[RMDB]
RNA sequence: GGGAACGACUCGAGUAGAGUCGAAAAGUGGCCUCGCACUGGGGUGGCACGCGUAACGGCACGAUUGUGCACUGGCCCAACGGAAUUGCCGCCAAGGGGGAGAUGCGCUGGCAGUUUCACCACGUCAGCAGAAAGUCAUAUUCGUAUGACUUUCUGCAAAAGAAACAACAACAACAAC
Reactivity to DMS in 0.01 (KOAc 150mM, MgCl2 10mM, bicine 150mM(pH8.5), 24C), signal-to-noise 3, nucleotides 027 to 126: g050u000g000g010c010c010u000c060g000c050a100c070u000g010g020g000g020u000g000g010c040a060c090g010c050g030u010a080a130c150g010g030c020a070c040g000a210u000u000g000u000g000c040a110c080u000g010g000c020c020c030a090a110c130g000g010a070a090u000u000g020c010c020g000c040c030a110a160g010g010g000g000g010a140g010a130u000g010c110g000c080u000g000g000c020a050g000u000u010u000c030a160c070c050a110c140g000u000c120a090
Reactivity to 2A3 in 0.01 (KOAc 150mM, MgCl2 10mM, bicine 150mM(pH8.5), 24C), signal-to-noise 4, nucleotides 027 to 126: g040u040g040g000c010c010u020c040g020c020a050c050u040g010g030g130g080u060g060g000c070a060c070g040c010g070u090a160a060c050g010g000c030a010c090g160a260u120u270g020u010g020c050a060c120u040g100g000c000c000c020a040a010c020g000g010a070a060u070u050g020c020c020g000c010c060a130a140g090g000g000g030g000a050g010a030u060g020c030g010c150u060g010g000c010a000g000u030u000u010c070a080c050c020a040c050g080u070c020a030
Structure probing data (DMS and 2A3) for a 177-nucleotide construct. Values cover nucleotides 27 to 126. The reactions ran in a buffer of 150 mM KOAc, 10 mM MgCl2 and 150 mM bicine (pH 8.5), at 24 C. For 2A3, 5,932 sequencing reads were counted. The data come from the RNA Mapping Database (RMDB), library OK2TST.